[RMDB]
RNA sequence: GGGAACGACUCGAGUAGAGUCGAAAAGAUAUGGAUCCGUAUACAGCGGGUCCAGGGUUUCUAGGUACGGUCGGAAACGACCGUACCUGAAACCCUGGGCGCCUAGCGCUGUACGGAUCCUAAGUCAGUAAGAUACAAUGUUCGCAUUGUAUCUUACAAAAGAAACAACAACAACAAC
Reactivity to DMS in 0.01 (KOAc 150mM, MgCl2 10mM, bicine 150mM(pH8.5), 24C), signal-to-noise 1, nucleotides 027 to 126: g010a090u000a300u000g000g010a000u010c000c010g000u010a180u000a080c010a050g030c010g000g020g010u000c000c000a000g000g000g000u010u000u010c020u010a010g000g050u000a020c000g000g010u010c000g050g000a170a160a300c030g020a020c000c000g030u000a000c000c010u000g010a000a000a010c020c010c000u000g000g010g000c030g020c140c140u010a130g000c050g020c060u000g010u010a010c000g010g000a000u000c000c010u000a000a050g010u000c050a160
Reactivity to 2A3 in 0.01 (KOAc 150mM, MgCl2 10mM, bicine 150mM(pH8.5), 24C), signal-to-noise 1, nucleotides 027 to 126: g040a050u060a060u260g000g000a000u000c000c000g000u050a070u050a170c010a020g000c000g040g090g040u010c000c020a000g000g000g000u000u050u020c300u300a040g000g030u000a030c050g120g020u060c090g080g100a270a200a150c040g080a020c000c000g020u010a000c010c000u010g010a000a000a000c000c010c000u000g010g000g000c040g150c020c020u110a130g130c010g030c030u020g000u000a020c020g000g000a020u030c000c000u000a000a010g060u010c040a030

Background
Structure probing data (DMS and 2A3) for a 177-nucleotide construct. Reactivities are rounded to 0.1 and cut off at 0 and 3. Values cover nucleotides 27 to 126. The RNA was probed in 150 mM KOAc, 10 mM MgCl2 and 150 mM bicine (pH 8.5) at 24 C. For 2A3 the reverse transcriptase was SuperScript II with manganese. The 2A3 profile rests on 2,541 reads.